RNA sequence: GGGAACGACUCGAGUAGAGUCGAAAAGGAUAACCAGGGCCGAUCUUGAUAACGAGGCCAAAGUUUUGGAGCUGAUGGAAGGUGAGCACAGACAACUGGCUAGAGCGAUCAUUGAGCUGACCUACAAACACAAGGUGGUGAAAGUUAUGCGACCUGGGACAAGCAUUUAAUUCGUUAAAUGCUUGUCAAAAGAAACAACAACAACAAC
Reactivity to DMS in 0.01 (KOAc 150mM, MgCl2 10mM, bicine 150mM(pH8.5), 24C), signal-to-noise 3, nucleotides 027 to 156: g000g010a140u000a050a170c030c030a160g050g020g060c010c010g040a110u000c040u000u020g000a130u000a040a090c070g020a250g050g030c000c040a040a040a090g020u000u010u010u010g010g010a190g030c050u000g020a110u010g020g030a100a090g020g040u000g010a080g030c060a070c050a140g000a120c060a070a130c060u020g020g000c010u000a080g010a150g020c050g000a070u000c020a060u000u000g010a100g020c010u010g020a080c020c000u000a160c020a060a030a120c050a070c010a060a070g040g020u020g000g020u000g020a070a060a110g000u000u010a100u010g020c020g020a210c040c010u010g020g000